This 177-nucleotide RNA was probed chemically with 2A3 and DMS. For DMS the reverse transcriptase was MarathonRT. The reactions ran in a buffer of 150 mM KOAc, 10 mM MgCl2 and 150 mM bicine (pH 8.5), at 24 C.
RNA sequence: GGGAACGACUCGAGUAGAGUCGAAAACGUAAUAUGUUCGCAUAUUACGAAAUCUCCAAUCAUGGCUAACCAGGAUCCUCCGAAGAAUUAAAGCCCUCGGUAAAAGGAGCGGGUUCGCCCGCUCCAAGAACAAUAAAAGGUUCGCCUUUUAUUGUUCAAAAGAAACAACAACAACAAC
Reactivity to 2A3 in 0.01 (KOAc 150mM, MgCl2 10mM, bicine 150mM(pH8.5), 24C), signal-to-noise 3, nucleotides 027 to 126: c000g010u000a000a000u010a000u020g010u010u050c080g000c100a010u010a000u010u000a000c000g000a060a040a020u040c050u000c000c020a040a090u120c050a080u120g040g000c010u050a050a070c030c010a040g080g020a090u050c010c030u020c040c050g030a100a050g030a110a160u240u180a150a090a020g060c000c010c000u050c040g090g020u070a050a070a040a070g000g010a000g000c010g030g040g000u030u030c100g070c010c000c030g020c000u000c000c000a000a000
Reactivity to DMS in 0.01 (KOAc 150mM, MgCl2 10mM, bicine 150mM(pH8.5), 24C), signal-to-noise 3, nucleotides 027 to 126: c000g020u000a010a000u000a010u010g000u010u020c200g030c000a000u000a010u010u000a000c000g010a020a060a120u000c070u000c010c120a110a100u010c100a080u010g000g000c050u000a070a110c070c030a050g000g010a100u000c020c020u010c020c020g000a050a050g010a090a090u000u010a070a080a160g000c030c010c010u010c040g020g000u010a050a070a110a100g000g000a000g000c000g030g000g000u000u000c190g010c000c000c010g010c000u000c000c010a020a040